Chemical mapping of a 177-nucleotide RNA with DMS and 2A3.
[RMDB]
RNA sequence: GGGAACGACUCGAGUAGAGUCGAAAAAGCAACGAGUGUGUGUGGGACGUUUUAUCCCAAGCUCUGAGUAGAGCACGCGCUCACACACACCGCGAGCGAGCAUCAGCAGAGCGCAAACGGUGGUAAAUUAUUAUGGACCUUUCGAGGUCCAUAAUAAAAAAGAAACAACAACAACAAC
Reactivity to DMS in 0.01 (KOAc 150mM, MgCl2 10mM, bicine 150mM(pH8.5), 24C), signal-to-noise 6, nucleotides 027 to 126: a100g010c070a150a060c040g000a190g020u000g010u000g020u000g020u000g010g000g010a070c010g010u000u010u000u010a120u010c040c030c030a090a110g000c010u000c000u000g010a180g020u020a070g000a010g020c000a110c100g010c070g000c010u000c000a010c000a000c000a020c000a020c010c010g000c030g000a200g010c020g010a090g000c060a030u010c050a080g010c040a060g000a100g010c070g020c050a040a090a070c070g000g010u000g010g010u000a050a070a100
Reactivity to 2A3 in 0.01 (KOAc 150mM, MgCl2 10mM, bicine 150mM(pH8.5), 24C), signal-to-noise 3, nucleotides 027 to 126: a000g060c030a050a040c020g030a110g060u000g000u030g010u000g010u010g020g010g040a040c010g020u030u040u080u210a150u080c020c020c000a020a000g000c000u020c010u070g290a220g140u300a020g170a000g020c000a000c030g090c010g020c010u010c010a000c000a000c000a010c000a000c000c000g040c010g000a000g010c010g020a020g030c000a040u080c020a020g050c020a020g030a020g070c050g000c020a060a000a040c040g020g030u040g010g010u050a030a130a070
Source: RMDB library M2PK90, as collected in RNAgym. Reactivities are rounded to 0.1 and cut off at 0 and 3.